The record gives the reactivity of an RNA of 177 nucleotides to 2A3 and DMS.
Values cover nucleotides 27 to 126.
For 2A3 the reverse transcriptase was SuperScript II with manganese.
Source: RMDB library OK2TRN, as collected in RNAgym.
DMS adducts were read by reverse transcription with MarathonRT.
The 2A3 profile rests on 309,288 reads.
[RMDB]
RNA sequence: GGGAACGACUCGAGUAGAGUCGAAAAGUGACGAGUUGCAGACGGUCCGUGAGAACGGACACGGAGCAACUUAUCGGCGUGCUCCGUCAACUUCGGGUAGAAAUGAGUUGCCCUACGUACGCCGUGACUAGUGGUAUGUAUUCGUACAUGCUACUAGAAAAGAAACAACAACAACAAC
Reactivity to 2A3 in 0.01 (KOAc 150mM, MgCl2 10mM, bicine 150mM(pH8.5), 24C), signal-to-noise 9, nucleotides 027 to 126: g110u070g050a040c050g010a020g000u000u000g000c010a000g020a140c000g010g000u000c000c000g000u010g030a080g010a040a000c000g000g010a010c030a020c030g000g000a010g000c000a000a000c000u000u010a050u030c000g000g000c000g000u000g000c010u020c040c020g050u030c010a020a030c020u180u130c070g080g020g130u190a080g130a090a120a090u170g010a030g030u020u020g010c000c000c010u010a010c020g000u000a000c000g000c000c000g000u010g020a020
Reactivity to DMS in 0.01 (KOAc 150mM, MgCl2 10mM, bicine 150mM(pH8.5), 24C), signal-to-noise 9, nucleotides 027 to 126: g010u010g010a100c160g000a010g010u000u000g010c010a050g000a300c020g000g000u000c000c000g010u000g000a260g000a220a010c000g000g000a010c000a060c000g000g000a120g010c000a010a010c010u000u000a030u000c010g010g000c010g010u000g000c000u000c070c050g000u000c010a020a020c020u000u010c100g010g010g010u010a110g000a090a110a140u010g000a030g000u000u000g000c030c000c010u000a040c130g010u000a010c010g010c000c000g010u000g000a160